This 207-nucleotide RNA was probed chemically with 2A3 and DMS.
For DMS the reverse transcriptase was MarathonRT.

RNA sequence: GGGAACGACUCGAGUAGAGUCGAAAAACACCAAAACUGACAACGGAAGGCAAUCCUUCCACGACGAUACUUACUUUCCUUUGAUCGUCGUUACUACUGGCAUAGCCACAAAGGAGAACAAACAUGAGCGCGGACACUGACUUCGGUCAGUGUCCAAUCAUAAGUAGAAGUUCGCUUCUACUUAUGAAAAAGAAACAACAACAACAAC
Reactivity to 2A3 in 0.01 (KOAc 150mM, MgCl2 10mM, bicine 150mM(pH8.5), 24C), signal-to-noise 9, nucleotides 027 to 156: a000c080a100c030c040a070a050a040a060c130u180g100a070c030a160a050c140g000g010a000a000g020g000c110a050a180u250c000c000u000u000c000c000a000c000g000a000c000g000a010u090a170c020u070u030a030c020u070u140u080c010c010u040u020u050g020a010u010c000g010u000c000g010u030u070a030c030u030a020c020u010g020g000c060a240u120a150g020c020c010a030c040a030a040a010g040g010a020g020a060a030c060a110a080a010c070a130u230g070a050g090c140g010c080g060g000a000c000a000c000u000g000a000c000u030u050c190g020g000u000c000a000g000u000g000u000c000c000a000a000
Reactivity to DMS in 0.01 (KOAc 150mM, MgCl2 10mM, bicine 150mM(pH8.5), 24C), signal-to-noise 3, nucleotides 027 to 156: a090c080a190c040c030a090a070a070a110c140u000g010a100c080a100a080c040g050g000a030a030g070g030c100a150a150u000c000c000u000u000c010c000a070c020g010a050c010g010a040u000a060c060u000u000a040c090u010u010u000c060c050u000u000u000g020a030u000c020g010u000c010g040u000u000a050c060u010a050c060u010g000g010c070a170u000a160g010c040c010a060c050a040a040a030g030g010a060g010a080a110c120a090a090a080c060a090u000g010a100g010c060g030c100g000g020a040c010a000c000u000g010a020c000u000u000c300g060g020u000c000a010g050u010g000u000c010c000a010a030